[RMDB]
RNA sequence: GGGAACGACUCGAGUAGAGUCGAAAAUAGAACUUAAAGACUGGCAGAAGCAAGAUGAGAGGGCUUCCUUUUGAAUGGAUGAGAGUAAAAAGAAAGAGACAGUGUUCAGGUUGUCACAUGCUAAAAGGAGCCCUGUGUAGACGUGAAUACUUGGUGACGAUGCUGAAGAAUUCGUUCUUCAGCAUCGAAAAGAAACAACAACAACAAC
Reactivity to 2A3 in 0.01 (KOAc 150mM, MgCl2 10mM, bicine 150mM(pH8.5), 24C), signal-to-noise 4, nucleotides 027 to 156: u100a010g040a050a030c030u040u070a090a030a000g070a040c030u050g050g010c030a000g010a090a010g020c050a000a050g040a080u160g020a060g010a040g030g010g010c000u120u120c010c010u020u060u050u070g110a090a040u050g030g030a020u070g010a000g010a000g080u140a010a090a050a050a030g120a030a060a010g070a010g010a010c020a050g030u010g040u140u090c030a040g010g110u040u030g020u010c010a020c000a080u070g040c040u110a060a040a000a000g020g000a010g000c010c020c010u000g010u000g000u000a030g010a030c040g020u010g020a010a020u040a090c020u030u100g000g030u060g030a020
Reactivity to DMS in 0.01 (KOAc 150mM, MgCl2 10mM, bicine 150mM(pH8.5), 24C), signal-to-noise 2, nucleotides 027 to 156: u000a120g010a080a070c050u000u010a080a090a070g000a040c010u000g040g000c030a060g010a040a060g020c040a060a090g010a080u010g020a160g020a040g020g020g000c040u000u000c030c000u000u000u000u000g020a100a080u000g010g020a090u000g010a070g000a140g040u010a030a080a110a070a110g000a080a060a100g000a160g020a050c030a060g010u000g020u010u000c050a100g010g020u000u000g030u000c010a070c040a110u000g000c050u010a010a090a030a070g020g030a100g020c020c000c020u000g010u000g000u000a140g010a030c000g010u000g000a090a070u000a040c060u000u010g000g000u000g030a160